[RMDB]
RNA sequence: GGGAACGACUCGAGUAGAGUCGAAAAUAAUGAUAUUACCUUCAAGUUGGUGUGCAAUUAAUGUAAUGAUACAAACCCAUAUAAAUGUAGUAGGACUAUCUAUAAUACCGAGUAUUGCUGCAGGUGCCCACCUUUAACUUUUCGAAGUUAAAGGUGGAAAAGAAACAACAACAACAAC
Reactivity to DMS in 0.01 (KOAc 150mM, MgCl2 10mM, bicine 150mM(pH8.5), 24C), signal-to-noise 5, nucleotides 027 to 126: u030a050a060u010g000a060u010a060u030u010a050c010c010u000u030c130a070a070g010u020u010g000g020u000g010u010g000c070a050a050u030u020a060a080u020g010u000a040a080u020g000a080u010a060c090a040a150a120c050c000c020a100u030a050u030a040a090a090u010g020u010a030g000u010a040g010g020a180c090u000a030u010c050u000a060u010a090a090u020a060c100c110g000a050g000u020a050u000u000g000c010u010g020c040a040g010g000u000g000c150
Reactivity to 2A3 in 0.01 (KOAc 150mM, MgCl2 10mM, bicine 150mM(pH8.5), 24C), signal-to-noise 6, nucleotides 027 to 126: u160a010a090u060g020a010u060a050u050u100a080c000c000u040u070c100a120a110g030u030u030g060g030u070g000u030g060c030a010a080u060u100a090a040u170g070u150a030a090u150g170a020u060a160c040a030a090a020c000c020c050a040u070a010u050a160a220a040u150g020u060a020g020u010a040g030g050a030c020u020a040u100c030u050a090u080a250a190u090a150c030c020g020a000g050u080a020u080u110g010c020u010g010c030a020g040g030u060g050c000
Source: RMDB library OK1LIB, as collected in RNAgym.
Chemical mapping of a 177-nucleotide RNA with DMS and 2A3.
For DMS the reverse transcriptase was MarathonRT.
For 2A3 the reverse transcriptase was SuperScript II with manganese.
DMS (dimethyl sulfate) methylates the pairing face of unpaired adenines and cytosines.
Conditions: 150 mM KOAc, 10 mM MgCl2 and 150 mM bicine (pH 8.5), 24 C.